[RMDB]
RNA sequence: GGGAACGACUCGAGUAGAGUCGAAAAAAGACGGCGCUGCACAUCUAUGAGGCUCUGACAGCUCUGCAGCAGGAGAAGGCGGAUGACCCCUUCGGCUGGAUUGUGCCGGUGGCCUGAGUGUCGGGAGUCAGUGUCCAGGAUUCGUCCUGGACACUGAAAAAGAAACAACAACAACAAC
Reactivity to DMS in 0.01 (KOAc 150mM, MgCl2 10mM, bicine 150mM(pH8.5), 24C), signal-to-noise 1, nucleotides 027 to 126: a090a050g000a080c080g000g020c030g030c040u000g000c070a090c080a090u010c090u000a110u020g010a110g020g000c010u000c050u010g020a100c070a060g000c020u010c010u000g000c040a020g000c040a120g000g020a060g000a080a060g010g020c040g030g010a170u010g010a140c060c010c090c010u010u010c030g000g000c030u000g020g000a090u000u010g010u000g000c030c000g020g010u000g010g010c020c010u000g000a070g020u000g030u000c070g000g000g000a120g010
Reactivity to 2A3 in 0.01 (KOAc 150mM, MgCl2 10mM, bicine 150mM(pH8.5), 24C), signal-to-noise 1, nucleotides 027 to 126: a000a000g150a030c060g030g070c030g020c020u040g040c120a050c040a150u100c010u100a100u270g080a080g050g020c000u020c070u140g120a030c040a030g050c040u050c040u060g030c000a030g050c010a020g020g030a100g000a060a060g040g030c080g010g110a130u190g100a290c010c000c030c040u000u000c050g050g020c030u010g090g040a090u000u130g040u080g000c020c040g120g050u010g090g030c000c000u040g020a030g000u080g020u030c000g000g050g000a000g080